[RMDB]
RNA sequence: GGGAACGACUCGAGUAGAGUCGAAAAGUACGUUGGAUCCAUGUCGGAGCUGGAGCAUUAGUUCCGACUUAAGUACGCAUCAUUAGAUGUGUAACGCUACUAGCUCCAAGCGGAUCCUUUCGUACGAGGGUUGGUGGUGCUUCGGCAUCACCAACCCAAAAGAAACAACAACAACAAC
Reactivity to 2A3 in 0.01 (KOAc 150mM, MgCl2 10mM, bicine 150mM(pH8.5), 24C), signal-to-noise 2, nucleotides 027 to 126: g000u000a010c000g010u010u000g000g000a000u000c000c000a020u100g110u170c130g020g000a000g000c000u010g020g020a000g000c000a020u000u070a050g000u020u130c090c010g010a020c030u010u040a020a000g020u000a000c000g000c000a000u000c000a030u000u280a080g000a000u000g020u000g000u050a080a030c040g000c000u300a300c000u000a220g000c000u000c000c010a050a020g060c040g000g000a030u030c000c030u000u000u090c000g010u000a000c000g000a070